[RMDB]
RNA sequence: GGGAACGACUCGAGUAGAGUCGAAAACGUUGUCAUCGACAACACCCUAUGCAUUCACGCUCUGUAAGGAUGCGCCGAAAGGUGAGCAAGCCCGAGUUGCCCAGACCUGAAAUGCAACACUUUAGAGAAAACCCGAAGCAGUUCGCUGCUUCGGGAACUUAGUAAAGUAGUUCGCUACUUUACUAAGAAAAGAAACAACAACAACAAC
Reactivity to DMS in 0.01 (KOAc 150mM, MgCl2 10mM, bicine 150mM(pH8.5), 24C), signal-to-noise 3, nucleotides 027 to 156: c110g000u000u000g010u000c030a170u000c100g040a090c010a030a030c020a080c000c000c000u000a120u010g000c060a050u000u070c040a130c120g020c030u000c000u000g020u000a290a180g000g000a060u010g030c010g030c060c050g000a100a150a140g020g030u010g000a160g030c060a210a180g010c050c070c040g000a100g020u010u010g020c000c000c070a180g030a060c020c010u000g010a070a060a070u000g000c050a080a110c050a080c030u000u000u000a100g000a170g000a110a060a120a120c030c000c000g000a020a050g020c020a060g030u010u000c290g040c010u000g020c000u000u000c000g010g030g020a000a000
Reactivity to 2A3 in 0.01 (KOAc 150mM, MgCl2 10mM, bicine 150mM(pH8.5), 24C), signal-to-noise 5, nucleotides 027 to 156: c080g000u000u010g000u020c070a210u150c300g020a010c000a010a000c000a050c000c000c000u040a060u060g020c010a000u000u020c040a040c270g010c010u000c010u020g020u040a010a020g010g000a020u010g010c010g000c010c000g070a110a030a010g010g000u030g030a020g000c030a030a050g030c010c050c010g130a070g040u050u070g040c030c030c050a030g050a090c020c040u090g050a090a100a020u070g030c020a070a020c030a050c070u110u170u210a100g010a010g010a100a100a040a030c010c000c000g000a000a000g000c000a010g010u050u130c200g030c090u000g000c000u000u000c000g000g000g000a000a000

Record summary
Structure probing data (DMS and 2A3) for a 207-nucleotide construct. For 2A3, 3,613 sequencing reads were counted. Reactivities are given for positions 27 through 156. It was measured as part of the RMDB library M2RFPK. The DMS profile rests on 4,216 reads.